[RMDB]
RNA sequence: GGGAACGACUCGAGUAGAGUCGAAAAUAACGUACUUUCGAGUACGUUAAGUCUCCCGGGGCUAGCAGGGCUGAAGAGAAGAUGGAGGAGCUGGUGGUGGAAUUAGGGGGGGAUUCGUCCCCCCCAAUAAUUUGUUGGUGUUCGCACCAACAAAUUAAAAAGAAACAACAACAACAAC
Reactivity to DMS in 0.01 (KOAc 150mM, MgCl2 10mM, bicine 150mM(pH8.5), 24C), signal-to-noise 1, nucleotides 027 to 126: u000a020a030c000g020u000a000c000u010u020u020c140g010a030g010u010a010c000g010u000u000a020a040g000u000c120u000c000c020c020g040g000g000g040c120u010a080g020c070a090g010g000g010c060u000g000a070a050g000a140g010a070a040g000a090u000g000g010a090g010g010a070g060c050u010g020g040u000g000g030u000g000g020a070a090u020u000a090g000g020g010g000g000g030g010a010u000u020c200g000u010c010c000c010c000c000c000c000a000a030